[RMDB]
Chemical mapping of a 177-nucleotide RNA with DMS and 2A3. The data come from the RNA Mapping Database (RMDB), libraries RFM100 and RFMREP. The RNA was probed in 150 mM KOAc, 10 mM MgCl2 and 150 mM bicine (pH 8.5) at 24 C. For DMS the reverse transcriptase was MarathonRT. For 2A3, 1,409 sequencing reads were counted. 2A3 adducts were read by reverse transcription with SuperScript II with manganese.
RNA sequence: GGGAACGACUCGAGUAGAGUCGAAAAAUUAAUCCGCAGAAUGCAAAUCCCCACCGGGGCGGAUGCCACGAUUUUGCGGUUGAACUGUUCGUUUUCUUCUAAUUGAAACGCAUUGACUUCGGCGGGCCCAUUGCAGUGGGUUCGCCCACUGCAAUGGAAAAGAAACAACAACAACAAC
Reactivity to DMS in 0.01 (KOAc 150mM, MgCl2 10mM, bicine 150mM(pH8.5), 24C), signal-to-noise 3, nucleotides 027 to 126: a110u030u030a110a100u020c000c000g020c020a020g000a030a030u010g020c090a050a120a120u010c070c000c000c060a180c140c010g000g020g000g000c040g000g010a100u020g030c030c040a020c040g000a050u010u000u000u010g030c020g000g000u010u000g000a080a080c100u040g000u000u000c100g000u030u010u000u000c020u010u000c140u010a080a100u030u000g020a030a040a070c060g000c110a060u010u020g000a080c040u020u000c080g020g010c010g010g010g000c140
Reactivity to 2A3 in 0.01 (KOAc 150mM, MgCl2 10mM, bicine 150mM(pH8.5), 24C), signal-to-noise 3, nucleotides 027 to 126: a000u220u110a090a060u020c020c010g010c000a010g030a050a010u070g030c120a110a070a040u080c000c020c010c000a050c060c070g020g010g060g000c030g130g060a090u160g020c020c000a060c060g050a020u030u030u000u050g020c000g020g000u040u060g010a050a050c020u070g050u070u060c030g000u050u010u080u050c020u070u000c040u070a080a300u160u140g080a040a070a030c030g040c030a060u030u130g070a100c040u090u050c030g010g020c000g020g000g000c000